Structure probing data (2A3 and DMS) for a 177-nucleotide construct.
RNA sequence: GGGAACGACUCGAGUAGAGUCGAAAACUUAGCAGUAAGGGCAGGUGAUCUAGCUGUGCACGUGUCCUCUUAGCCAUGGUGGGAGGUGAUCUGGUUGUGCAGGUGUCCUCUUAGCAGUGAUGGGAGGUGGUCAACUAUAGUUCGCUAUAGUUGACCAAAAAGAAACAACAACAACAAC
Reactivity to 2A3 in 0.01 (KOAc 150mM, MgCl2 10mM, bicine 150mM(pH8.5), 24C), signal-to-noise 5, nucleotides 027 to 126: c040u090u060a010g030c030a060g040u180a120a080g030g040g020c020a040g030g070u040g040a100u050c040u060a010g060c030u050g090u120g040c000a020c060g150u040g060u060c000c000u000c010u060u080a030g030c030c020a050u100g040g020u040g050g050g000a010g040g000u040g060a030u020c010u030g090g020u100u120g040u090g110c020a000g000g030u020g070u040c010c000u020c000u030u010a030g050c020a040g010u040g080a030u060g010g020g000a030g020g030
Reactivity to DMS in 0.01 (KOAc 150mM, MgCl2 10mM, bicine 150mM(pH8.5), 24C), signal-to-noise 3, nucleotides 027 to 126: c040u010u020a080g030c070a050g000u010a070a070g010g010g010c020a040g000g000u000g000a040u010c030u000a110g010c050u010g020u020g020c010a030c050g000u000g020u010c020c000u000c100u010u010a090g010c070c030a050u000g010g010u000g000g010g020a050g010g000u000g000a060u010c020u010g000g000u020u000g000u020g000c040a050g010g000u000g000u010c000c020u030c030u000u000a080g020c020a060g000u020g010a120u000g010g000g010a050g020g000
For 2A3 the reverse transcriptase was SuperScript II with manganese. It was measured as part of the RMDB library OK1LIB. The 2A3 profile rests on 4,781 reads. DMS adducts were read by reverse transcription with MarathonRT. Values cover nucleotides 27 to 126.